[RMDB]
RNA sequence: GGGAACGACUCGAGUAGAGUCGAAAACAGAUGAUGACGUUAGAUUCAUCGGUAAAGCGGCGGCCGUGUUGAUCAAUCCACAGAUAUGGCUGACGCGCGGCGGCUAGCAGAUGAGAGUUAGGCGCAUUCAAUCGGUCCGUUUCGACGGACCGAUUGAAAAAGAAACAACAACAACAAC
Reactivity to 2A3 in 0.01 (KOAc 150mM, MgCl2 10mM, bicine 150mM(pH8.5), 24C), signal-to-noise 1, nucleotides 027 to 126: c040a020g080a090u150g000a060u060g000a070c050g050u090u110a000g000a090u000u000c000a000u000c000g010g010u300a210a180a000g000c040g090g080c000g150g000c000c000g020u000g030u040u100g100a290u000c060a070a020u020c000c000a070c000a140g080a070u170a000u190g000g040c000u000g000a000c020g000c000g000c000g000g040c000g040g000c090u060a210g000c010a000g000a030u050g030a000g000a000g050u080u300a140g030g060c000g000c000a000u000